[RMDB]
RNA sequence: GGGAACGACUCGAGUAGAGUCGAAAACAUGGUAGAAUUCCGGUUCUGUAUUUCUGCGGAUUGGUUAUUGAUCCGUUCUGUCUAUUUAGGGAAAUAGCGGAAGUCGUAUUUCACCUUUUAUGCGUUAGGGUAUAUCAAUCUUCGGAUUGAUAUACCCAAAAGAAACAACAACAACAAC
Reactivity to 2A3 in 0.01 (KOAc 150mM, MgCl2 10mM, bicine 150mM(pH8.5), 24C), signal-to-noise 4, nucleotides 027 to 126: c040a040u120g000g040u080a120g050a020a020u060u000c030c010g010g000u050u010c010u000g040u050a040u020u030u020c020u030g000c000g000g000a010u030u080g090g060u210u120a130u140u300g040a030u010c000c000g010u010u000c000u020g160u030c010u080a190u080u230u150a070g010g020g150a020a000a000u050a040g160c000g040g000a050a020g130u090c010g010u010a040u000u010u000c040a130c000c000u060u070u030u110a130u170g100c050g060u050u150a090
Reactivity to DMS in 0.01 (KOAc 150mM, MgCl2 10mM, bicine 150mM(pH8.5), 24C), signal-to-noise 2, nucleotides 027 to 126: c060a120u020g000g020u020a050g000a040a080u020u000c120c000g000g000u010u020c030u000g010u000a050u010u000u000c000u010g000c000g010g000a030u000u000g000g000u030u040a090u020u090g000a030u010c000c000g010u000u010c080u020g020u040c030u020a070u020u020u030a110g020g020g000a040a020a000u000a040g000c030g000g020a050a070g000u020c010g010u010a040u000u000u000c010a120c040c000u000u030u030u020a130u030g000c120g010u010u020a120

Source: RMDB library OK1LIB, as collected in RNAgym. The record gives the reactivity of an RNA of 177 nucleotides to 2A3 and DMS. For DMS, 5,328 sequencing reads were counted. The RNA was probed in 150 mM KOAc, 10 mM MgCl2 and 150 mM bicine (pH 8.5) at 24 C. For 2A3, 2,458 sequencing reads were counted.